[RMDB]
RNA sequence: GGGAACGACUCGAGUAGAGUCGAAAAUUGCGCUGUCGCUUCGGCUACUACCCGGUGGAAACAACUGAAGCUCCCGAGAACCGCUUUUUCUCUAUCUUACUUGCUUCGGGGCGAGGGUGUUUAGCCCUUGGAACCGCAGUUGGUUCCUCGGAACUAACCGAUUUUGAAAGUUCGCUUUCAAAAUCGGAAAAGAAACAACAACAACAAC
Reactivity to 2A3 in 0.01 (KOAc 150mM, MgCl2 10mM, bicine 150mM(pH8.5), 24C), signal-to-noise 1, nucleotides 027 to 156: u090u100g000c040g040c160u160g160u300c000g020c000u030u010c030g020g000c000u080a210c010u020a060c230c010c150g000g000u100g010g000a130a100a020c010a040a000c010u030g080a080a050g070c020u120c100c080c030g010a030g000a040a040c070c020g070c180u120u110u010u140u060c130u020c040u120a170u110c040u090u150a170c040u070u140g080c010u080u120c010g000g000g030g040c010g020a000g000g040g010u050g020u090u080u230a040g030c000c000c000u000u000g090g100a080a040c000c000g020c020a020g010u030u090g030g000u000u000c000c000u000c010g050g050a020a000c000u020a050a010

An RNA of 207 nucleotides, treated with 2A3 and read out base by base.
High 2A3 reactivity points to a flexible backbone, as in loops and unpaired stretches.
Reactivities are given for positions 27 through 156.
For 2A3 the reverse transcriptase was SuperScript II with manganese.